[RMDB]
The data come from the RNA Mapping Database (RMDB), library M2RFOK. This 207-nucleotide RNA was probed chemically with 2A3.

RNA sequence: GGGAACGACUCGAGUAGAGUCGAAAAACUGAUGGUACGCCGUCAGAACGGUAGAAAAGAUGGUUUGAAAACCACGCCUUCUACCAAUAUAGUAAAUAAAUAGGCGGAGCGGUCAUACGUGACCGCAAAAACAUCCUUGGCUUCGGCCAAGGAUGAACACAUGAGGACACUUCGGUGUCCUCAUGUGAAAAGAAACAACAACAACAAC
Reactivity to 2A3 in 0.01 (KOAc 150mM, MgCl2 10mM, bicine 150mM(pH8.5), 24C), signal-to-noise 2, nucleotides 027 to 156: a000c000u000g000a000u000g010g000u040a030c210g030c030c010g010u010c010a020g010a050a020c040g010g010u020a020g030a040a010a000a000g090a230u020g000g090u110u130u240g140a190a190a010a000c000c000a000c000g010c000c000u000u000c000u020a000c000c010a000a000u130a010u030a000g100u080a010a100a100u050a070a070a010u080a040g010g000c000g010g000a010g000c010g000g010u000c000a000u010a110c200g070u000g000a000c010c000g030c000a010a010a010a000a010c010a000u000c000c000u020u000g000g010c000u060u050c240g060g030c010c000a000a000g000g000a000u010g000a000a000
Conditions: 150 mM KOAc, 10 mM MgCl2 and 150 mM bicine (pH 8.5), 24 C.